[RMDB]
RNA sequence: GGGAACGACUCGAGUAGAGUCGAAAAAGCUGUGUCAGCUGGGCACGGAACCCCGCCAUGACACACUGGAGAACGUAGAGUUGCUCUGACCCUCCUUUCUCUCACUUAGGGUCCCUGAAUCAUGCCCAAGUCUUGUGAAAGUCAAAGAGAGGGAAAGCGACUUAAAUACAUUCGUGUAUUUAAGUCGAAAAGAAACAACAACAACAAC
Reactivity to 2A3 in 0.01 (KOAc 150mM, MgCl2 10mM, bicine 150mM(pH8.5), 24C), signal-to-noise 6, nucleotides 027 to 156: a000g040c100u010g000u000g000u010c000a010g010c030u020g000g010g010c160a130c300g160g060a160a220c030c010c000c010g000c030c050a190u120g010a000c000a000c000a000c010u040g060g010a080g010a100a030c070g050u100a030g040a040g160u010u030g020c020u000c020u070g050a060c010c000c000u000c000c000u000u020u030c010u010c000u000c000a010c020u050u110a090g010g010g010u070c070c000c020u070g120a120a080u150c030a080u220g000c000c000c000a040a040g060u040c070u130u120g010u010g010a050a030a010g000u020c040a020a070a000g140a020g000a010g000g000g010a060a030a010g020
Reactivity to DMS in 0.01 (KOAc 150mM, MgCl2 10mM, bicine 150mM(pH8.5), 24C), signal-to-noise 3, nucleotides 027 to 156: a070g030c050u000g050u020g020u000c010a060g030c040u000g010g010g000c010a090c220g020g020a180a100c050c010c000c040g000c010c020a170u000g000a060c020a020c010a030c040u000g040g030a080g020a090a100c090g040u000a120g010a180g020u000u000g020c010u000c040u010g000a240c010c010c000u000c020c010u000u010u000c010u000c020u000c010a040c050u010u000a120g040g030g010u000c100c060c040u000g020a120a130u000c060a050u010g020c030c000c010a090a180g020u000c100u000u000g020u000g000a070a040a060g000u010c070a030a010a100g000a190g010a040g000g010g010a010a070a090g010
Conditions: 150 mM KOAc, 10 mM MgCl2 and 150 mM bicine (pH 8.5), 24 C. This 207-nucleotide RNA was probed chemically with 2A3 and DMS. DMS adducts were read by reverse transcription with MarathonRT. For 2A3 the reverse transcriptase was SuperScript II with manganese. It was measured as part of the RMDB library OK3TST. Reactivities are given for positions 27 through 156.